Source: RMDB library OK3TST, as collected in RNAgym. An RNA of 207 nucleotides, treated with DMS and 2A3 and read out base by base. For DMS the reverse transcriptase was MarathonRT.
[RMDB]
RNA sequence: GGGAACGACUCGAGUAGAGUCGAAAAGGCAUGUUUAGUGAGGGGGGUGUAGCGAAGAAGUUGCGAAAGGUUGCCAUCGGGAUGACUGACUUUUAUUAAAGGCUUGGCCCAGCUGUCAUCCUCGGGUGGAAAGGUCGUCCCGGUAAAGCAUCGACGGCUGUGUAACAAGUUUCGACUUGUUACACAGAAAAGAAACAACAACAACAAC
Reactivity to DMS in 0.01 (KOAc 150mM, MgCl2 10mM, bicine 150mM(pH8.5), 24C), signal-to-noise 2, nucleotides 027 to 156: g000g030c050a080u030g000u000u000u000a070g010u000g010a080g000g020g010g000g030g020u000g050u000a030g010c050g030a060a150g000a090a220g010u010u000g010c050g000a150a090a120g020g030u000u010g010c000c030a050u000c010g010g010g010a070u000g000a030c020u000g010a110c060u000u000u000u000a100u030u010a080a060a070g030g020c070u000u000g030g000c030c020c050a160g000c050u020g010u000c020a050u040c010c000u010c020g020g030g020u010g010g020a030a040a170g000g000u000c000g000u010c010c030c000g050g030u000a030a050a090g000c030a060u000c030g040a060c070g030g000
Reactivity to 2A3 in 0.01 (KOAc 150mM, MgCl2 10mM, bicine 150mM(pH8.5), 24C), signal-to-noise 2, nucleotides 027 to 156: g050g000c060a020u090g090u040u170u150a070g020u100g060a080g030g010g000g010g040g000u060g030u050a020g000c020g000a020a000g040a030a040g080u120u100g000c040g050a150a050a000g080g010u020u040g000c010c030a050u050c010g010g000g010a000u010g000a000c000u010g050a050c010u190u150u110u040a100u070u160a180a080a030g040g010c050u060u060g050g040c000c000c070a030g030c110u060g020u080c020a020u060c000c020u000c020g030g000g020u030g030g020a030a090a050g010g000u010c000g010u000c000c000c000g000g040u050a040a050a060g020c020a080u050c010g080a080c020g050g010